Record summary: Chemical mapping of a 177-nucleotide RNA with DMS and 2A3. The reactions ran in a buffer of 150 mM KOAc, 10 mM MgCl2 and 150 mM bicine (pH 8.5), at 24 C. 2A3 adducts were read by reverse transcription with SuperScript II with manganese. For DMS, 4,563 sequencing reads were counted.
RNA sequence: GGGAACGACUCGAGUAGAGUCGAAAAUCGAUAUUGAAGGGACCAUCGACUCAUGGAAAUAUCGAGUCAUGGAACAGCAAUGCUAUGGCCAGCCGUUUAAAGGGACCAUCAUAGUAACCAUGAAAUAACGAUGGUAAUGAUUCGUCAUUACCAUCGUAAAAGAAACAACAACAACAAC
Reactivity to DMS in 0.01 (KOAc 150mM, MgCl2 10mM, bicine 150mM(pH8.5), 24C), signal-to-noise 5, nucleotides 027 to 126: u000c050g000a050u000a090u000u010g010a210a110g000g000g000a160c040c070a150u000c140g000a040c050u010c040a080u010g010g010a120a050a060u000a030u000c040g010a050g010u000c000a020u000g000g000a130a040c080a120g000c090a050a070u000g020c200u000a040u000g010g010c020c100a120g000c020c010g000u010u000u020a060a130a100g000g000g000a070c030c030a040u020c040a040u000a020g010u000a100a110c060c020a020u000g000a060a070a060u020a120
Reactivity to 2A3 in 0.01 (KOAc 150mM, MgCl2 10mM, bicine 150mM(pH8.5), 24C), signal-to-noise 5, nucleotides 027 to 126: u030c010g000a000u030a040u090u140g080a080a100g040g020g030a040c010c020a070u070c090g050a040c020u000c030a100u110g150g090a100a110a040u150a030u040c030g000a010g020u010c020a010u020g010g000a110a040c020a040g050c040a080a000u050g000c020u070a030u070g030g020c010c030a050g020c040c020g030u080u100u140a140a110a020g040g000g010a030c030c000a020u080c010a000u000a030g030u030a060a020c020c010a030u050g100a070a060a040u170a020